An RNA of 177 nucleotides, treated with 2A3 and read out base by base. For 2A3, 965 sequencing reads were counted. 2A3 is a SHAPE reagent: it acylates the 2'-hydroxyl of flexible nucleotides of all four kinds.
[RMDB]
RNA sequence: GGGAACGACUCGAGUAGAGUCGAAAAUAAAUGUGAUAAUAAUGUGAUCCGCUAACAUAAAAAAAGUUUGACUUCACAAAAGCAGCUGGAAAUGGACAACCACAAUAUGCAUAAAUCUAACUCCUACCACUCGUUCCUACUUCGGUAGGAACGAGUGAAAAGAAACAACAACAACAAC
Reactivity to 2A3 in 0.01 (KOAc 150mM, MgCl2 10mM, bicine 150mM(pH8.5), 24C), signal-to-noise 2, nucleotides 027 to 126: u210a060a050a010u100g030u000g050a120u060a300a010u020a100a030u010g020u030g040a150u000c000c030g020c030u080a110a080c010a090u290a070a210a000a020a000a020a000g030u120u000u050g060a130c040u000u010c070a000c000a110a040a040a000g010c010a030g020c000u030g000g020a000a130a030u020g020g010a000c010a070a010c150c000a000c000a010a030u100a000u110g060c070a030u130a130a060a040u000c010u060a030a020c000u000c050c000u040a080c000
2A3 adducts were read by reverse transcription with SuperScript II with manganese. Values cover nucleotides 27 to 126. It was measured as part of the RMDB library RFM100.